[RMDB]
RNA sequence: GGGAACGACUCGAGUAGAGUCGAAAAGCAGGGUCGUAAAAUGCUGAUGGCUCUUCUUUCUGAUAAUGCCUAUCUCAAAUGGGCGCGUGUUGAAGGUAAGGACGGAUUUGUCAGUGUAGAGCUACAAUAACCCUGAGGUUCGCCUCAGGGAAAAGAAACAACAACAACAAC
Reactivity to 2A3 in 0.01 (KOAc 150mM, MgCl2 10mM, bicine 150mM(pH8.5), 24C), signal-to-noise 7, nucleotides 027 to 129: g060c020a010g000g020g030u040c030g040u120a050a080a070a070u180g040c050u080g060a160u120g040g000c020u000c000u040u000c010u020u100u020c010u000g020a010u050a090a020u110g020c000c010u030a110u060c080u010c070a090a090a050u090g010g000g010c030g020c030g020u080g020u040u150g050a080a030g050g010u060a050a050g030g020a030c020g020g010a060u040u040u080g020u040c020a000g000u020g030u040a030g000a000g040c010u020a020c050a030a070u130a060a060
Reactivity to DMS in 0.01 (KOAc 150mM, MgCl2 10mM, bicine 150mM(pH8.5), 24C), signal-to-noise 4, nucleotides 027 to 129: g000c000a040g000g000g000u000c000g040u000a010a020a040a020u080g030c120u060g000a130u020g020g010c020u030c040u050u020c060u000u010u020c020u000g040a070u030a040a010u040g000c000c010u020a050u030c100u080c130a100a090a080u000g000g020g030c000g030c120g000u040g020u000u000g030a070a060g000g000u060a090a040g000g000a050c080g000g000a100u000u000u000g000u020c030a030g000u030g000u050a000g040a000g000c090u030a040c110a040a060u070a100a110